[RMDB]
An RNA of 177 nucleotides, treated with DMS and read out base by base. DMS adducts were read by reverse transcription with MarathonRT. Conditions: 150 mM KOAc, 10 mM MgCl2 and 150 mM bicine (pH 8.5), 24 C.
RNA sequence: GGGAACGACUCGAGUAGAGUCGAAAAGCUUUUUUGUUGGUGUUGGCAUCUUCGUGAUGAAAGAUCAGAAGGAGCACGGACACCAGGAUAGAAAAGAAGGGAAGCACGGACAUAAGCCGGUUUGACGCAGAGACUGAAGGUUCGCCUUCAGUCUCUGAAAAGAAACAACAACAACAAC
Reactivity to DMS in 0.01 (KOAc 150mM, MgCl2 10mM, bicine 150mM(pH8.5), 24C), signal-to-noise 1, nucleotides 027 to 126: g000c080u000u000u000u060u000u000g040u000u000g010g010u010g080u000u010g010g010c030a090u000c010u000u000c000g010u010g030a010u010g000a110a070a160g000a030u000c010a110g010a060a000g030g000a020g030c020a070c210g020g030a040c030a040c010c030a040g000g010a080u020a080g010a000a000a000a000g020a120a090g010g010g030a080a110g030c030a060c020g000g000a110c060a090u010a100a150g030c010c010g000g010u020u010u000g000a180c150g000